[RMDB]
RNA sequence: GGGAACGACUCGAGUAGAGUCGAAAAGCACUCUUUCGAGAGUGCAAAAUCCUAAGUCUUAACGUUGAUCGUACACCGGUUCUUUGAUCUAUCGGAAACGAUAGGGAGAACGUGUACGGGAGUUAAGAUAUGGAAAAGCGUAUGCUUCGGCAUACGCCAGCAGUUAUGCGUUCGCGCAUAACUGCUGAAAAGAAACAACAACAACAAC
Reactivity to 2A3 in 0.01 (KOAc 150mM, MgCl2 10mM, bicine 150mM(pH8.5), 24C), signal-to-noise 4, nucleotides 027 to 156: g000c000a000c010u010c000u030u110u160c220g150a030g000a000g030u010g020c000a030a020a000a110u020c010c010u040a100a030g020u010c000u000u010a010a010c020g190u150u020g020a010u010c000g010u000a000c010a010c090c160g300g010u010u020c000u260u170u090g070a090u040c000u000a000u010c000g100g000a120a040a040c010g000a000u000a000g010g000g000a010g000a010a000c010g000u000g000u000a000c000g000g000g000a010g000u000u000a000a000g010a010u020a050u040g070g020a070a030a110a010g010c000g000u000a000u010g000c000u070u080c250g060g000c010a000u010a000c000g000c020
Reactivity to DMS in 0.01 (KOAc 150mM, MgCl2 10mM, bicine 150mM(pH8.5), 24C), signal-to-noise 1, nucleotides 027 to 156: g000c020a030c000u010c000u000u010u000c280g000a030g000a060g050u010g000c000a050a020a100a130u000c000c000u000a060a220g000u000c010u000u000a010a020c010g000u010u020g010a070u000c020g010u000a010c010a000c070c150g040g030u000u000c010u000u000u020g000a200u010c000u000a000u000c000g010g000a210a060a250c000g030a030u010a030g010g010g010a010g030a000a030c000g000u010g000u000a020c010g010g000g000a040g010u000u000a010a000g000a020u000a160u000g010g020a070a110a100a130g010c010g030u000a000u000g010c020u010u020c300g010g010c010a030u010a010c010g010c010

This 207-nucleotide RNA was probed chemically with 2A3 and DMS. The RNA was probed in 150 mM KOAc, 10 mM MgCl2 and 150 mM bicine (pH 8.5) at 24 C. For 2A3, 5,430 sequencing reads were counted.